This 207-nucleotide RNA was probed chemically with 2A3 and DMS. Source: RMDB library OK3TST, as collected in RNAgym. For 2A3, 1,510 sequencing reads were counted. The RNA was probed in 150 mM KOAc, 10 mM MgCl2 and 150 mM bicine (pH 8.5) at 24 C.

[RMDB]
RNA sequence: GGGAACGACUCGAGUAGAGUCGAAAACUUUAUAUGUGUGUUUGUUUUGUGAGCCACCGUCGACUUUCAGCCUUUGAGUGCUUUGGGUCACUGCUUGCAGGCCACAGCAUUCGAUAAUGAGAAAAUAAACCUGAAUUUGUGUUCAAUGCAUUCAGUGGAACGGAACUAUAUUCGUAUAGUUCCGUUCAAAAGAAACAACAACAACAAC
Reactivity to 2A3 in 0.01 (KOAc 150mM, MgCl2 10mM, bicine 150mM(pH8.5), 24C), signal-to-noise 4, nucleotides 027 to 156: c030u140u250u140a200u120a140u170g030u000g020u000g020u060u110u000g070u030u020u090u050g040u030g030a010g040c030c020a020c030c010g060u040c060g020a010c000u000u060u050c090a030g040c000c010u080u080u070g030a020g010u040g010c000u000u100u060g040g000g050u170c100a070c140u040g050c010u030u130g020c000a000g060g140c000c000a010c000a020g000c010a000u040u030c010g030a030u050a140a100u120g060a020g130a050a090a040a060u180a100a080a040c010c000u000g020a040a050u040u080u070g060u020g060u090u170c120a050a050u260g000c010a000u020u030c000a000g170u170g110
Reactivity to DMS in 0.01 (KOAc 150mM, MgCl2 10mM, bicine 150mM(pH8.5), 24C), signal-to-noise 1, nucleotides 027 to 156: c030u000u000u010a080u010a110u020g000u000g000u010g010u000u000u000g000u010u000u000u000g030u000g010a040g000c010c000a020c020c130g010u010c010g000a040c030u010u010u000c020a140g030c060c080u000u000u000g020a050g020u000g000c010u000u000u000g000g050g000u020c020a150c020u010g030c110u000u010g020c000a090g000g020c010c020a050c070a060g000c050a070u000u000c000g020a110u010a070a100u000g000a170g000a100a070a060a090u010a030a060a100c080c020u000g010a050a110u010u000u000g030u010g010u000u000c090a070a090u000g010c020a080u010u000c040a050g020u010g010
For DMS the reverse transcriptase was MarathonRT.